RNA sequence: GGGAACGACUCGAGUAGAGUCGAAAACGUGAUGUGUUCGCACAUCACGAAACUUUGAAGCCGGGUAACACGGCAACCGGCAACAAAGCCGAGUAACAAAGAAAACGCCUGACUUCGGUCAGGCGAAGAUGAGAUUACUGUUCGCAGUAAUCUCAUCAAAAGAAACAACAACAACAAC
Reactivity to DMS in 0.01 (KOAc 150mM, MgCl2 10mM, bicine 150mM(pH8.5), 24C), signal-to-noise 3, nucleotides 027 to 126: c010g030u000g000a010u010g020u010g010u010u020c270g020c010a010c000a010u010c010a000c010g020a050a060a130c010u000u010u000g000a060a300g020c010c010g020g000g010u010a080a110c070a060c090g010g020c140a080a060c000c000g030g010c000a050a240c040a060a050a040g020c040c040g000a170g000u010a060a100c100a060a050a090g000a080a060a150a190c020g000c010c000u000g020a020c000u010u020c150g010g000u000c000a010g010g010c000g000a000a030
Reactivity to 2A3 in 0.01 (KOAc 150mM, MgCl2 10mM, bicine 150mM(pH8.5), 24C), signal-to-noise 3, nucleotides 027 to 126: c010g000u000g000a000u000g000u000g020u040u040c120g060c070a010c010a010u000c000a000c000g000a010a000a000c010u030u020u030g030a050a010g000c010c010g020g070g060u150a130a030c090a030c110g030g000c000a000a010c000c000g000g000c000a000a050c060a060a060a000g000c010c010g030a060g100u080a180a030c080a090a100a020g130a040a120a030a010c010g010c010c010u010g000a000c010u020u040c220g060g000u000c000a000g000g010c010g010a000a000